[RMDB]
RNA sequence: GGGAACGACUCGAGUAGAGUCGAAAACUGGCAUUAGGAUUUUAGGUCAUCAUAAAUUAAAAUUUGAUUUUCUUCACUCAGAGAAUAUUAGGAUAAUGGAGUUAUCUGUUCUCUGAAAUUUGCGGAAGAAGUGUCUAUUCUUCGGAAUAGACACUUCAAAAGAAACAACAACAACAAC
Reactivity to 2A3 in 0.01 (KOAc 150mM, MgCl2 10mM, bicine 150mM(pH8.5), 24C), signal-to-noise 5, nucleotides 027 to 126: c010u010g040g000c010a060u030u070a060g080g090a090u020u040u050u070a080g010g040u030c000a090u020c020a030u220a150a150a120u170u220a060a130a050a070u090u060u060g070a080u040u050u040u090c030u040u050c020a020c060u000c010a010g010a000g000a030a000u080a130u280u260a060g000g020a010u010a010a010u090g220g100a120g210u010u000a020u000c000u010g010u000u000c000u000c000u000g000a020a000a000u090u100u070g030c000g040g050a030a050
Reactivity to DMS in 0.01 (KOAc 150mM, MgCl2 10mM, bicine 150mM(pH8.5), 24C), signal-to-noise 1, nucleotides 027 to 126: c030u000g000g000c020a010u000u000a020g000g020a090u000u020u000u010a040g000g010u000c050a030u010c130a030u060a070a060a060u090u010a040a000a070a050u000u000u010g000a150u000u020u020u000c030u020u000c050a120c210u020c000a000g000a000g020a010a000u000a200u010u090a070g010g000a010u010a010a070u000g010g000a100g000u000u010a000u000c000u010g000u010u000c000u020c000u000g020a000a040a090u010u100u020g040c110g000g020a060a090
Conditions: 150 mM KOAc, 10 mM MgCl2 and 150 mM bicine (pH 8.5), 24 C. The record gives the reactivity of an RNA of 177 nucleotides to 2A3 and DMS. Values cover nucleotides 27 to 126. 2A3 is a SHAPE reagent: it acylates the 2'-hydroxyl of flexible nucleotides of all four kinds. Source: RMDB library RFM100, as collected in RNAgym.